Source: RMDB library M2RFPK, as collected in RNAgym. The record gives the reactivity of an RNA of 207 nucleotides to 2A3 and DMS. DMS adducts were read by reverse transcription with MarathonRT. The RNA was probed in 150 mM KOAc, 10 mM MgCl2 and 150 mM bicine (pH 8.5) at 24 C.
RNA sequence: GGGAACGACUCGAGUAGAGUCGAAAACAUAAGACCUCAGAGCUAAUGAGCCAUAUACCUACCCAAGGUGAAAGCUCCUUCUCUCGCAAUGUGUAACUCAUGAUUCUCAUGACCCCUGGUUGGAGAGCGCGCUAACACGCCUUCGGGCGUGUUAGAAGUUCUUUUACCGGUUCGCCGGUAAAAGAACAAAAGAAACAACAACAACAAC
Reactivity to 2A3 in 0.01 (KOAc 150mM, MgCl2 10mM, bicine 150mM(pH8.5), 24C), signal-to-noise 1, nucleotides 027 to 156: c030a050u110a160a000g040a060c030c030u060c100a040g020a020g050c050u080a070a040u070g010a010g050c030c040a030u050a020u050a190c020c020u040a060c010c020c030a070a000g030g000u010g040a090a020a030g000c010u020c000c030u050u020c020u000c000u010c040g020c090a030a130u110g030u090g070u230a050a030c010u020c040a020u020g030a170u290u060c020u000c090a050u070g000a080c000c000c000c060u020g050g030u040u020g000g040a060g000a020g090c060g010c000g010c040u010a000a000c000a000c000g000c000c040u050u050c130g020g000g010c000g000u000g000u000u000a000g000a000a000
Reactivity to DMS in 0.01 (KOAc 150mM, MgCl2 10mM, bicine 150mM(pH8.5), 24C), signal-to-noise 1, nucleotides 027 to 156: c030a150u010a040a070g000a100c060c020u010c020a100g020a050g060c120u010a070a160u000g000a070g060c000c020a050u030a260u000a050c080c010u010a100c050c050c050a270a190g020g000u000g000a110a200a150g000c010u000c000c070u000u000c000u000c040u000c010g010c020a100a160u000g040u000g000u000a030a180c060u000c020a130u000g000a170u000u000c100u000c010a030u000g000a080c060c000c000c050u000g000g060u000u000g000g000a060g010a070g070c060g010c130g010c000u000a010a000c010a020c010g030c000c010u000u000c300g070g030g110c000g050u000g010u000u000a000g020a090a100